[RMDB]
Annotation
Structure probing data (DMS and 2A3) for a 177-nucleotide construct. Conditions: 150 mM KOAc, 10 mM MgCl2 and 150 mM bicine (pH 8.5), 24 C.
RNA sequence: GGGAACGACUCGAGUAGAGUCGAAAAUGGUGCCACUUCUUUUGACCCUCUUACAACUAAGAUUAACUUUCCAGCAGACUUACAAAUAGAUGUAAGCACUACUCACCAAAAGUUAAAUACUUUAAUGAUCUAACCGAUGUUUCGACAUCGGUUAGAUAAAAGAAACAACAACAACAAC
Reactivity to DMS in 0.01 (KOAc 150mM, MgCl2 10mM, bicine 150mM(pH8.5), 24C), signal-to-noise 2, nucleotides 027 to 126: u000g020g000u000g040c060c040a030c110u000u010c030u010u000u000u000g000a160c050c030c030u020c060u000u000a190c120a110a060c100u000a090a050g020a140u000u000a060a050c030u000u000u000c050c120a040g030c040a010g030a200c020u010u000a020c020a050a020a170u020a040g000a110u000g010u000a020a090g010c070a030c010u030a020c040u000c040a150c180c130a050a030a010a040g020u000u010a010a030a120u000a120c050u000u000u000a070a180u010g010
Reactivity to 2A3 in 0.01 (KOAc 150mM, MgCl2 10mM, bicine 150mM(pH8.5), 24C), signal-to-noise 1, nucleotides 027 to 126: u060g030g070u050g000c040c010a080c020u000u010c030u020u080u020u070g120a110c000c000c000u040c010u010u050a060c050a120a040c060u110a040a030g000a030u020u040a010a020c030u040u040u000c040c010a000g000c020a050g070a160c000u000u000a000c040a010a150a240u130a060g180a070u080g000u000a000a000g030c000a030c050u090a020c010u030c030a030c010c040a000a060a000a060g010u060u060a080a140a070u120a040c010u120u060u090a150a090u170g040